[RMDB]
Conditions: 150 mM KOAc, 10 mM MgCl2 and 150 mM bicine (pH 8.5), 24 C. This 177-nucleotide RNA was probed chemically with DMS and 2A3. For DMS, 2,705 sequencing reads were counted. 2A3 adducts were read by reverse transcription with SuperScript II with manganese. The 2A3 profile rests on 1,169 reads. DMS adducts were read by reverse transcription with MarathonRT.
RNA sequence: GGGAACGACUCGAGUAGAGUCGAAAAUAAUCGAAAAAUUUGCCAGUGAUAUGAUGGCCUUGUCACAGAGAUCACAAGGGACACGGAGUUGACUUUUGCUCAAGGUGGAACGACAGAGCUGUGUAGGCUACGCGUGUCUAUUCGUAGACACGCGUAGAAAAGAAACAACAACAACAAC
Reactivity to DMS in 0.01 (KOAc 150mM, MgCl2 10mM, bicine 150mM(pH8.5), 24C), signal-to-noise 2, nucleotides 027 to 126: u040a060a120u040c100g020a020a090a140a050a080u030u020u000g010c000c000a060g000u010g000a140u020a050u000g000a250u020g010g020c000c070u020u000g020u010c090a040c080a100g020a050g010a080u020c150a080c110a120a020g000g000g020a240c040a000c090g010g000a100g010u000u000g000a080c060u010u000u000u000g000c020u010c010a090a100g000g020u010g020g000a090a080c090g000a080c160a080g000a070g040c000u000g010u010g010u010a090g000g000
Reactivity to 2A3 in 0.01 (KOAc 150mM, MgCl2 10mM, bicine 150mM(pH8.5), 24C), signal-to-noise 2, nucleotides 027 to 126: u090a000a010u100c070g160a010a090a010a050a080u040u110u110g010c020c000a050g000u020g130a110u050a060u120g260a080u030g050g000c000c000u020u100g050u010c000a000c000a030g020a040g000a100u030c000a000c000a110a020g040g060g010a040c000a000c000g000g040a000g040u010u030g180a220c070u080u150u180u150g030c090u050c000a040a060g110g010u020g000g020a080a000c000g070a030c000a010g060a000g000c010u010g010u090g010u090a060g090g000